[RMDB]
RNA sequence: GGGAACGACUCGAGUAGAGUCGAAAAUCGGCGGCACAUCCAGUGUAUUGCUGCCCGUUACGUGAACGAGAACCCAUUUUGCGUCUGGCGAAGUCGGCACUGGUGACGGUCUAUCCAUUACCUGACAACCUUCCUUAGGGUUCGCCCUAAGGAAGGUAAAAGAAACAACAACAACAAC
Reactivity to 2A3 in 0.01 (KOAc 150mM, MgCl2 10mM, bicine 150mM(pH8.5), 24C), signal-to-noise 3, nucleotides 027 to 126: u050c000g000g010c010g040g000c010a050c010a050u050c020c060a100g040u010g030u120a140u060u200g000c020u010g000c000c000c010g030u030u070a020c060g020u040g150a080a020c070g020a060g090a180a120c040c000c030a070u120u080u060u080g040c040g010u050c030u020g020g050c030g020a030a010g100u090c010g030g010c040a010c050u020g040g000u020g000a020c040g010g020u000c030u050a060u050c010c020a070u000u100a070c010c000u020g020a070c040a050
Reactivity to DMS in 0.01 (KOAc 150mM, MgCl2 10mM, bicine 150mM(pH8.5), 24C), signal-to-noise 4, nucleotides 027 to 126: u010c230g000g000c060g010g010c030a000c230a160u010c060c060a030g000u010g010u010a110u020u010g010c010u000g000c050c010c040g010u010u000a020c110g010u000g000a070a050c130g010a140g020a090a140c040c020c030a180u010u000u010u010g010c040g000u000c050u000g020g000c040g000a070a120g010u000c050g010g000c030a040c020u000g000g020u000g010a090c140g000g020u000c060u000a070u010c040c050a080u000u000a100c070c020u000g000a090c200a150